[RMDB]
RNA sequence: GGGAACGACUCGAGUAGAGUCGAAAACAUUACGAAUUCAGUCGCAAAUUGUAGAAUUAGCUACUCUACGAUUUAGUGAGCGUUAGUAACGUUGUAAUAUCAUAUAGUCUUUGGAAGGAUUAUAUUGGAGCCGCGGACAAGUUCGCUUGUCCGCGAACUGCGUUAGAUACUUCGGUAUCUAACGCAGAAAAGAAACAACAACAACAAC
Reactivity to 2A3 in 0.01 (KOAc 150mM, MgCl2 10mM, bicine 150mM(pH8.5), 24C), signal-to-noise 2, nucleotides 027 to 156: c040a070u150u160a060c020g090a090a120u140u130c070a070g090u020c000g020c000a000a000a000u010u020g000u000a010g010a020a060u050u020a050g060c060u100a040c010u000c000u000a000c010g020a000u000u020u130a080g000u010g020a030g110c020g000u010u050a070g050u050a110a050c040g000u000u010g040u060a060a050u060a090u140c000a010u000a000u010a020g010u000c050u090u100u130g220g060a130a050g030g010a000u000u010a010u020a010u030u060g090g090a010g140c120c000g000c020g000g010a000c000a000a000g010u090u100c130g020c220u020u010g000u000c020c010g000c000g000a000a000

Annotation:
An RNA of 207 nucleotides, treated with 2A3 and read out base by base. Conditions: 150 mM KOAc, 10 mM MgCl2 and 150 mM bicine (pH 8.5), 24 C. Reactivities are given for positions 27 through 156. For 2A3, 940 sequencing reads were counted. The data come from the RNA Mapping Database (RMDB), library M2RFPK.